[RMDB]
Description:
Structure probing data (DMS and 2A3) for a 177-nucleotide construct. For DMS the reverse transcriptase was MarathonRT.
RNA sequence: GGGAACGACUCGAGUAGAGUCGAAAAAACAACGAUGUCAAGAUCCUUGCCAAGCUCGAAGAGAUCAGCAAGAAGCUGUAAUGAGCGCGAAGCCAACACCCAAAGUCGCCGCCGUCGGCGUCAGCGGCCAGCAAUAUUCCUUCGGGAAUAUUGCUGGAAAAGAAACAACAACAACAAC
Reactivity to DMS in 0.01 (KOAc 150mM, MgCl2 10mM, bicine 150mM(pH8.5), 24C), signal-to-noise 1, nucleotides 027 to 126: a000a050c090a060a030c020g000a090u000g000u000c050a030a060g000a030u000c020c030u000u010g000c020c020a040a150g000c020u020c020g000a200a190g010a160g010a120u010c080a070g010c040a190a040g020a160a140g050c010u000g050u000a050a120u000g000a130g020c000g000c060g020a120a130g000c000c050a040a040c100a100c000c030c000a060a150a060g000u000c020g000c000c020g020c040c040g000u000c030g010g020c000g000u000c120a090g000c080g010g000
Reactivity to 2A3 in 0.01 (KOAc 150mM, MgCl2 10mM, bicine 150mM(pH8.5), 24C), signal-to-noise 1, nucleotides 027 to 126: a010a020c110a070a050c070g120a040u040g070u060c020a090a000g020a080u040c030c010u020u030g010c070c000a060a040g010c010u040c040g040a080a020g080a000g000a260u110c050a000g020c010a020a170g050a200a010g030c000u040g090u100a010a130u120g040a000g050c090g000c030g050a010a000g010c000c030a010a020c020a080c000c030c010a040a010a080g010u050c010g060c050c010g000c110c110g190u250c080g000g000c000g000u010c000a000g000c020g010g000
Values are in units of 0.01, from 0 to 300, in steps of 10. For 2A3, 757 sequencing reads were counted.